[RMDB]
RNA sequence: GGGAACGACUCGAGUAGAGUCGAAAAUAUGUCUGGACAAUUUGUCUUUUGUUGAGAGUCGAACGAGUGCUCUCCAAGACAAGUCUGACCCACUUCGUGAUGGCACAGGGAGACAAUGUUAUCAUAACUCUAACUACACAUUCGUGUGUAGUUAGAGAAAAGAAACAACAACAACAAC
Reactivity to DMS in 0.01 (KOAc 150mM, MgCl2 10mM, bicine 150mM(pH8.5), 24C), signal-to-noise 8, nucleotides 027 to 126: u000a080u010g010u010c020u010g010g010a060c050a210a090u010u010u000g010u000c000u000u000u010u010g010u000u000g010a020g010a020g030u000c030g000a130a140c270g010a140g020u000g000c000u000c000u000c000c030a040a000g000a010c010a020a030g000u000c040u010g010a110c020c030c030a100c160u000u010c110g020u000g010a060u000g000g000c020a030c080a080g000g000g010a070g010a050c080a040a120u000g000u000u000a070u000c060a040u010a080a200
Reactivity to 2A3 in 0.01 (KOAc 150mM, MgCl2 10mM, bicine 150mM(pH8.5), 24C), signal-to-noise 9, nucleotides 027 to 126: u240a070u090g050u010c070u100g030g010a020c040a100a180u040u040u030g000u000c000u020u120u080u100g130u110u170g020a010g000a000g000u050c070g040a170a130c140g030a250g070u200g010c000u000c000u000c000c000a010a000g000a000c000a000a010g010u000c030u020g050a050c010c000c000a050c040u120u150c080g100u050g040a070u070g040g010c030a020c050a080g080g060g020a060g020a020c040a040a150u080g050u080u080a160u070c040a050u070a150a110